[RMDB]
An RNA of 177 nucleotides, treated with 2A3 and DMS and read out base by base. Conditions: 150 mM KOAc, 10 mM MgCl2 and 150 mM bicine (pH 8.5), 24 C. Values cover nucleotides 27 to 126.
RNA sequence: GGGAACGACUCGAGUAGAGUCGAAAAGGGGGACUCCGAGUGUGAGGGCAUAUAGCCCUCGCUUUUCUGUACCGUAAGGUGGUUCAGGAACAAGGACUGGGCAAGACCGGUGCCAGCCGCCGCGGUAAGAAUUACAACGUUUCGACGUUGUAAUUCUAAAAGAAACAACAACAACAAC
Reactivity to 2A3 in 0.01 (KOAc 150mM, MgCl2 10mM, bicine 150mM(pH8.5), 24C), signal-to-noise 5, nucleotides 027 to 126: g060g010g000g000g030a030c010u010c040c020g020a020g080u090g010u020g020a000g000g040g010c040a040u260a020u120a300g000c000c000c010u000c000g000c000u040u010u010u000c020u030g060u020a010c000c000g050u060a080a100g000g040u050g010g010u050u080c080a070g070g040a050a060c050a100a100g050g010a010c030u050g000g040g030c100a140a020g060a070c010c010g010g010u060g040c000c010a010g010c010c000g000c010c010g020c010g010g000u010a050
Reactivity to DMS in 0.01 (KOAc 150mM, MgCl2 10mM, bicine 150mM(pH8.5), 24C), signal-to-noise 4, nucleotides 027 to 126: g010g000g000g000g030a120c050u010c010c020g010a090g020u010g020u010g020a010g010g020g000c010a200u040a150u020a140g000c000c010c000u010c000g030c040u000u000u010u000c020u020g030u000a010c000c010g000u010a090a100g010g030u010g000g010u010u010c120a170g010g010a080a060c210a120a070g010g000a090c020u000g000g000g020c090a110a090g000a170c020c020g010g000u000g020c010c020a070g000c000c010g000c010c020g010c000g020g000u010a040